[RMDB]
RNA sequence: GGGAACGACUCGAGUAGAGUCGAAAAUGCUGGACUCGACGCCCGAGUUCGAGCAUGGGCCAUCUCCGAGCGAAGGGGGCGCGCUGGAAGGGUCGGCUCCCGAGAGGGAUAAAACGGUAAAGAGCGUUGGAUCUCUGAGGGUAGAACCCCCAAGAAGCUCAUCUUAUUCGUUCGCGAAUAAGAUGAGAAAAGAAACAACAACAACAAC
Reactivity to 2A3 in 0.01 (KOAc 150mM, MgCl2 10mM, bicine 150mM(pH8.5), 24C), signal-to-noise 2, nucleotides 027 to 156: u020g000c000u000g000g010a010c010u020c000g080a080c080g230c080c120c020g010a000g010u000u040c070g060a010g000c020a000u020g000g030g040c020c000a090u090c090u010c050c030g050a020g030c030g030a070a090g000g000g000g010g000c010g000c000g010c040u140g000g000a060a020g070g000g000u050c050g040g030c010u010c000c000c000g030a060g010a000g020g010g000a000u060a010a070a000a000c020g000g100u140a140a110a070g100a060g090c020g000u010u010g050g070a060u000c020u000c010u060g060a100g020g020g000u040a020g040a130a080c010c010c000c000c000a030a010g090a050a030g070
Reactivity to DMS in 0.01 (KOAc 150mM, MgCl2 10mM, bicine 150mM(pH8.5), 24C), signal-to-noise 1, nucleotides 027 to 156: u020g020c030u010g000g020a020c000u000c000g020a170c130g020c150c110c020g040a030g040u000u000c000g050a040g020c030a010u000g020g010g050c000c020a090u000c020u000c040c010g000a130g050c000g000a060a110g020g000g050g010g020c000g040c040g000c010u000g030g020a120a160g000g010g020u010c060g050g040c120u000c020c020c000g030a080g000a180g040g000g010a130u000a030a050a020a030c000g000g030u020a090a120a170g020a180g010c090g020u020u000g030g020a060u010c000u000c020u000g010a170g000g020g060u000a090g000a030a300c040c000c010c010c020a010a130g000a100a240g000